Notes:
An RNA of 177 nucleotides, treated with 2A3 and DMS and read out base by base. For 2A3, 9,557 sequencing reads were counted. The DMS profile rests on 10,954 reads. DMS adducts were read by reverse transcription with MarathonRT. Reactivities are given for positions 27 through 126. The data come from the RNA Mapping Database (RMDB), library OK1LIB.
[RMDB]
RNA sequence: GGGAACGACUCGAGUAGAGUCGAAAAGCACGUAGGUUCAGAUGAUGGGCCCGCAUCCGUACGAAAGUAAGACGAAAGUCCAGCCUACGUGCAUGAGCACGCGGGCCCCGUGCUCUACUGCAAAAGAGGGUCAUAAAUAUUUCGAUAUUUAUGACCCAAAAGAAACAACAACAACAAC
Reactivity to 2A3 in 0.01 (KOAc 150mM, MgCl2 10mM, bicine 150mM(pH8.5), 24C), signal-to-noise 5, nucleotides 027 to 126: g000c000a000c000g000u000a000g020g000u100u130c120a030g010a090u100g000a020u030g050g000g000c000c000c000g010c000a010u000c040c040g080u090a090c040g050a140a070a030g070u090a060a000g020a010c020g040a140a010a000g010u010c020c020a000g000c000c000u000a000c000g000u000g010c000a000u010g000a000g010c010a000c010g000c010g000g010g000c000c000c000c000g000u000g030c000u000c000u020a070c020u060g200c100a000a070a040a030g160a150
Reactivity to DMS in 0.01 (KOAc 150mM, MgCl2 10mM, bicine 150mM(pH8.5), 24C), signal-to-noise 4, nucleotides 027 to 126: g010c010a000c010g010u010a000g000g000u000u000c120a050g000a030u000g010a020u020g010g000g000c000c000c000g010c010a000u000c010c110g010u000a020c010g000a140a090a130g010u000a030a070g010a010c000g020a130a130a170g010u000c010c090a050g010c000c010u000a010c000g000u000g010c000a010u010g000a110g000c010a000c020g000c110g010g000g010c030c000c000c000g010u000g010c010u000c010u010a110c130u020g010c170a070a050a070a100g010a300